Annotation: The record gives the reactivity of an RNA of 177 nucleotides to 2A3 and DMS. For DMS, 1,289 sequencing reads were counted. It was measured as part of the RMDB library OK1LIB. For 2A3 the reverse transcriptase was SuperScript II with manganese.

RNA sequence: GGGAACGACUCGAGUAGAGUCGAAAAUUUGUGCUACAGCCCUUCCUAUCUGAUAGAAAAGGAUCCCAUGAUCCUGAACCGAUCUUACCUGGGAUCGCAAAUCCCAAGUUUGUCUAUGAAGAGCGGAGAUCGUGAUCACGUUCGCGUGAUCACGAUCAAAAGAAACAACAACAACAAC
Reactivity to 2A3 in 0.01 (KOAc 150mM, MgCl2 10mM, bicine 150mM(pH8.5), 24C), signal-to-noise 2, nucleotides 027 to 126: u050u040u270g180u080g000c080u080a040c000a060g000c000c000c000u000u030c000c030u000a010u000c030u040g020a060u000a210g090a010a100a000a000g000g040a040u000c030c060c030a150u260g000a030u120c000c020u000g000a080a020c030c050g040a100u080c000u020u060a120c000c000u030g050g000g000a000u000c050g000c020a170a080a050u000c000c000c010a000a010g000u000u050u030g070u010c050u050a060u150g110a050a130g030a070g060c100g000g000a100
Reactivity to DMS in 0.01 (KOAc 150mM, MgCl2 10mM, bicine 150mM(pH8.5), 24C), signal-to-noise 1, nucleotides 027 to 126: u000u040u000g020u000g000c050u000a040c050a030g000c120c000c020u030u000c090c020u010a190u040c090u000g000a050u000a030g000a020a120a150a000g020g000a020u000c000c220c080a100u040g030a060u010c000c020u010g000a180a160c240c050g020a090u090c030u020u000a040c050c050u000g050g050g000a000u000c080g020c250a010a100a060u000c000c000c000a000a080g000u000u050u020g000u000c050u040a090u090g000a080a150g000a020g000c090g000g000a250